The record gives the reactivity of an RNA of 177 nucleotides to DMS and 2A3. The 2A3 profile rests on 7,240 reads.
RNA sequence: GGGAACGACUCGAGUAGAGUCGAAAAAAGGGAGGGGGGGUGCCGCAACAAGGAGAGGAGGACGGAGUGGGGCGAGUGGAGCGUCAAAGGGGAUGUCAUCGCCGCCGAAUCUGCUCGUGGGACAUCCACUCUUAUAUUUGUUCGCAAAUAUAAGAGUAAAAGAAACAACAACAACAAC
Reactivity to DMS in 0.01 (KOAc 150mM, MgCl2 10mM, bicine 150mM(pH8.5), 24C), signal-to-noise 3, nucleotides 027 to 126: a120a090g000g010g010a090g020g000g000g000g000g000g010u020g000c020c010g010c050a080a020c150a110a130g020g020a120g010a100g030g000a110g010g000a060c060g020g000a060g020u010g010g010g010g030c060g000a060g010u020g020g020a090g000c070g000u000c040a040a100a130g050g000g000g030a050u000g000u000c040a060u000c040g050c020c040g000c070c070g000a020a050u040c080u000g000c020u020c070g030u010g000g000g000a060c070a070u010c030c040
Reactivity to 2A3 in 0.01 (KOAc 150mM, MgCl2 10mM, bicine 150mM(pH8.5), 24C), signal-to-noise 6, nucleotides 027 to 126: a000a000g130g040g040a200g020g010g020g010g010g010g010u040g020c010c020g050c010a070a110c050a100a080g100g020a090g030a030g070g030a040g030g010a040c080g030g010a060g020u120g000g010g000g000c040g000a010g020u110g000g030a040g020c030g030u030c040a050a060a030g030g020g010g000a020u060g070u060c050a080u080c070g020c050c010g020c010c000g020a020a080u040c030u060g020c000u010c030g010u070g000g010g010a020c000a040u000c000c010
Reactivities are given for positions 27 through 126.